Chemical mapping of a 177-nucleotide RNA with 2A3 and DMS.
DMS adducts were read by reverse transcription with MarathonRT.
The DMS profile rests on 5,420 reads.
The RNA was probed in 150 mM KOAc, 10 mM MgCl2 and 150 mM bicine (pH 8.5) at 24 C.
Reactivities are given for positions 27 through 126.
RNA sequence: GGGAACGACUCGAGUAGAGUCGAAAAGAUAUGGAGAACCUUUGUGCUGCUACGCAGAUAUCGGAAACGAUGUAGUAGCAGAACUACACAAAUGUUCUCCUAAGUCAAAGGUGGCUUCGGCCACCAACUGUUCAUAUCAGUUCGCUGAUAUGAACAGAAAAGAAACAACAACAACAAC
Reactivity to 2A3 in 0.01 (KOAc 150mM, MgCl2 10mM, bicine 150mM(pH8.5), 24C), signal-to-noise 5, nucleotides 027 to 126: g030a010u070a020u130g000g000a000g000a000a020c010c000u010u000u010g010u020g000c000u010g010c000u010a000c010g030c100a100g080a300u300a030u180c020g010g010a070a040a030c010g010a000u020g060u250a300g000u000a000g030c000a000g000a010a010c060u180a020c010a000c000a000a020a000u010g000u000u000c000u000c000c000u010a020a010g010u010c040a070a060a130g030g000u010g000g010c010u040u130c300g130g000c000c010a010c000c000a000a010
Reactivity to DMS in 0.01 (KOAc 150mM, MgCl2 10mM, bicine 150mM(pH8.5), 24C), signal-to-noise 4, nucleotides 027 to 126: g000a030u000a300u000g000g010a010g010a000a000c000c080u010u000u000g000u000g000c000u000g000c000u000a000c010g040c240a150g020a060u010a030u000c010g000g010a090a080a130c010g010a020u000g010u010a100g030u000a000g000c000a010g000a050a050c130u020a300c000a020c000a010a010a000u010g010u000u000c000u000c000c000u010a010a040g000u000c030a090a120a110g010g040u000g000g000c000u000u010c200g020g010c000c000a000c000c010a020a040